[RMDB]
Chemical mapping of a 207-nucleotide RNA with 2A3. 2A3 adducts were read by reverse transcription with SuperScript II with manganese.
RNA sequence: GGGAACGACUCGAGUAGAGUCGAAAAGGGGUCUUCCUGUGGGUUCGGACAUGACCUAUGCUGAAGCCUCCACGGCAUACGGUCAACAGCCGAACCGUAACAUCAGGAAGACGGAGGCACCCAAACCGGAGAGCUGACUUCGGUCAGCUCUCCGGAAGAAUGACAGAUACUUCGGUAUCUGUCAUUCAAAAGAAACAACAACAACAAC
Reactivity to 2A3 in 0.01 (KOAc 150mM, MgCl2 10mM, bicine 150mM(pH8.5), 24C), signal-to-noise 1, nucleotides 027 to 156: g120g000g040g020u000c010u000u000c000c000u000g040u030g010g000g030u000u010c020g000g060a150c150a300u060g000a000c000c000u000a000u000g000c010u010g020a060a000g000c000c000u000c000c010a020c020g000g000c000a020u040a070c290g000g000u020c030a110a080c080a090g040c010c000g000a000a000c000c000g000u060a010a000c010a130u070c010a000g000g000a010a000g020a010c000g010g000a000g000g020c010a020c000c010c000a060a050a000c010c010g050g000a010g020a000g000c060u000g000a000c000u060u190c300g090g040u000c010a010g000c000u000c000u000c000c000g000g000a000a000